Conditions: 150 mM KOAc, 10 mM MgCl2 and 150 mM bicine (pH 8.5), 24 C. Chemical mapping of a 207-nucleotide RNA with 2A3.
RNA sequence: GGGAACGACUCGAGUAGAGUCGAAAAACGCAUCAUACGUGAUGCGAGAACUACAGUUCCGCUCCUCUAGCACACAGAGGUCAAUUGGGUGCGACCCCACCCUCUCCCGUGGGUCAACGGGAACCAAAAAAGACCCUUUAGUUCGCUAAAGGGUCAACUUGAUUGCGUUGUUCGCAACGCAAUCAAGAAAAGAAACAACAACAACAAC
Reactivity to 2A3 in 0.01 (KOAc 150mM, MgCl2 10mM, bicine 150mM(pH8.5), 24C), signal-to-noise 2, nucleotides 027 to 156: a000c000g010c040a010u010c010a020u050a120c150g110u070g020a020u040g000c030g000a060g000a020a030c120u280a080c040a030g000u000u000c010c020g030c030u110c010c000u030c000u070a060g040c060a050c010a010c010a100g010a020g020g040u040c030a050a080u090u100g040g110g000u030g030c050g160a290c020c000c010c000a000c000c010c010u030c000u000c000c000c000g000u010g000g000g090u080c060a000a000c000g000g010g020a000a000c030c010a000a050a030a040a030a050g000a000c000c000c010u000u000u000a000g020u030u050c190g010c110u010a010a010a010g000g000g000u000c000a000a000
2A3 adducts were read by reverse transcription with SuperScript II with manganese. It was measured as part of the RMDB library M2RFPK. The 2A3 profile rests on 1,511 reads.